Chemical mapping of a 207-nucleotide RNA with 2A3 and DMS. For DMS the reverse transcriptase was MarathonRT.
RNA sequence: GGGAACGACUCGAGUAGAGUCGAAAAGAAUAUUUCUAUCAGAAAACUCAAGAAAGUGGAGCCAUUGAGUUGAGGGGUAUAUGCAUUUUAAACUUUGGUACACAUUACAAACUUUGGUACAAAAAGUUUGCAUCAGUUGGCACUACCACAACAAUGAUCCAUAUUAGUCCUUCGGGACUAAUAUGGAAAAAGAAACAACAACAACAAC
Reactivity to 2A3 in 0.01 (KOAc 150mM, MgCl2 10mM, bicine 150mM(pH8.5), 24C), signal-to-noise 1, nucleotides 027 to 156: g020a030a110u110a060u100u130u090c110u070a090u070c050a000g180a090a250a020a000c010u030c130a130a000g020a110a160a000g050u020g040g020a080g010c010c000a050u050u080g020a030g040u030u060g080a030g000g080g030g000u130a020u020a000u060g040c050a000u000u030u040u300a000a040a040c000u000u000u020g000g000u000a000c140a000c020a060u030u230a090c050a060a080a000c080u110u030u090g080g000u080a050c000a000a200a000a000a000g000u000u040u070g000c030a060u080c020a080g060u080u190g060g000c010a030c050u130a070c020c020a040c010a170a060c000a040a040u110g000a000
Reactivity to DMS in 0.01 (KOAc 150mM, MgCl2 10mM, bicine 150mM(pH8.5), 24C), signal-to-noise 1, nucleotides 027 to 156: g030a190a200u000a060u000u030u000c030u000a100u000c050a240g000a140a100a060a120c070u000c040a050a050g030a080a140a180g040u000g010g020a200g020c020c000a100u000u010g010a040g030u020u010g080a190g000g000g000g020u000a070u000a080u000g000c010a100u000u010u010u000a060a050a100c040u000u000u000g000g010u000a050c070a030c040a070u000u010a040c010a030a050a040c040u020u000u020g040g000u040a040c230a100a070a050a050a070g010u000u000u000g000c000a010u000c080a200g010u000u020g010g000c070a050c000u020a040c010c000a020c080a070a080c030a060a120u000g000a190
The RNA was probed in 150 mM KOAc, 10 mM MgCl2 and 150 mM bicine (pH 8.5) at 24 C. It was measured as part of the RMDB library OK3TST. For DMS, 1,375 sequencing reads were counted. Values cover nucleotides 27 to 156.